[RMDB]
RNA sequence: GGGAACGACUCGAGUAGAGUCGAAAACAAACCUGCGGAAGACUUUCACUUCAUCGGCGCCAUCGUCAGCAGCGCUACUCAUAGCGGUGACUCUCCGCGGGAUAUCCACUGGAGAGAUUGUCGGACAGCGUACUGGACUGUUCGCAGUCCAGUACGCAAAAGAAACAACAACAACAAC
Reactivity to 2A3 in 0.01 (KOAc 150mM, MgCl2 10mM, bicine 150mM(pH8.5), 24C), signal-to-noise 2, nucleotides 027 to 126: c040a000a040a000c000c010u040g050c000g050g020a100a010g000a090c030u150u130u030c010a000c000u030u010c020a190u090c140g010g070c020g000c000c000a130u150c090g170u060c040a120g000c090a070g030c030g000c020u070a240c030u160c250a200u140a020g040c070g030g080u000g020a060c000u020c000u000c000c000g000c000g000g000g040a030u040a020u050c010c000a040c110u130g040g000a060g020a000g100a270u080u070g020u080c030g000g070a050c050a000